[RMDB]
RNA sequence: GGGAACGACUCGAGUAGAGUCGAAAAGAUAUGGAUCACGGGUUCUUUUGACGCUCCACCAUCGGAAACGAUGGUAGGAGCGAUAAGAAUUGUGAUCCUAAGUCAAAGCACCGCUUCGGCGGUGCAACUAAGUGAGAAUGUUCGCAUUCUCACUUAGAAAAGAAACAACAACAACAAC
Reactivity to 2A3 in 0.01 (KOAc 150mM, MgCl2 10mM, bicine 150mM(pH8.5), 24C), signal-to-noise 3, nucleotides 027 to 126: g010a020u050a030u110g010g000a000u000c010a000c070g270g090g030u050u030c040u060u220u160u300g300a200c120g000c000u010c000c000a000c000c000a000u010c000g010g010a010a020a030c020g000a000u000g010g020u010a030g000g010a000g010c000g010a010u000a000a000g000a010a010u060u030g000u000g000a000u000c000c000u010a040a000g000u000c030a190a050a020g000c000a000c010c010g010c030u050u070c180g140g000c010g000g000u010g010c000a000a010
Reactivity to DMS in 0.01 (KOAc 150mM, MgCl2 10mM, bicine 150mM(pH8.5), 24C), signal-to-noise 4, nucleotides 027 to 126: g010a030u000a200u010g000g000a010u000c000a010c000g010g020g020u000u000c000u000u000u010u000g010a250c120g020c000u000c000c010a040c010c000a000u010c000g010g000a080a040a090c000g010a010u000g000g010u010a020g060g000a010g020c000g010a000u010a000a010g000a020a020u000u000g010u000g000a010u000c000c000u000a000a070g000u000c020a110a150a180g010c000a010c000c010g010c010u000u010c260g040g020c010g000g020u000g000c010a010a050